[RMDB]
RNA sequence: GGGAACGACUCGAGUAGAGUCGAAAACCGGCAUGCUGACCGACGAAGGACCGCAGCGAUAUCAGCUCCGCAAGGUCUGGACUAUGUUGCAGGAUUUCUAGGAGCACUGUGCGCCGGAUGGACGCCGGGAGGAAUGAACCUUCGGGUUCAUUCCUCCAAAAGAAACAACAACAACAAC
Reactivity to DMS in 0.01 (KOAc 150mM, MgCl2 10mM, bicine 150mM(pH8.5), 24C), signal-to-noise 1, nucleotides 027 to 126: c000c000g020g040c090a150u000g020c020u000g010a000c140c010g000a030c200g000a060a020g020g000a300c030c030g020c000a080g000c050g030a080u000a090u020c020a090g020c050u000c090c090g000c150a270a230g000g100u040c000u000g000g000a090c000u000a020u030g090u070u020g090c020a300g010g000a300u030u000u020c000u020a220g000g000a150g000c000a180c030u030g000u000g050c000g000c000c010g050g050a140u020g000g060a000c070g030c020c000g000
Reactivity to 2A3 in 0.01 (KOAc 150mM, MgCl2 10mM, bicine 150mM(pH8.5), 24C), signal-to-noise 1, nucleotides 027 to 126: c010c000g040g060c030a030u070g030c010u050g150a230c030c000g030a050c040g000a010a000g150g000a090c000c050g000c030a020g000c040g000a010u040a020u150c060a030g030c070u020c040c000g060c140a060a040g000g010u000c000u020g000g030a000c000u070a030u170g010u000u030g040c020a120g010g010a090u000u030u040c010u000a020g020g000a040g050c030a030c140u070g000u040g080c020g000c020c000g020g000a040u120g040g000a020c070g000c000c000g050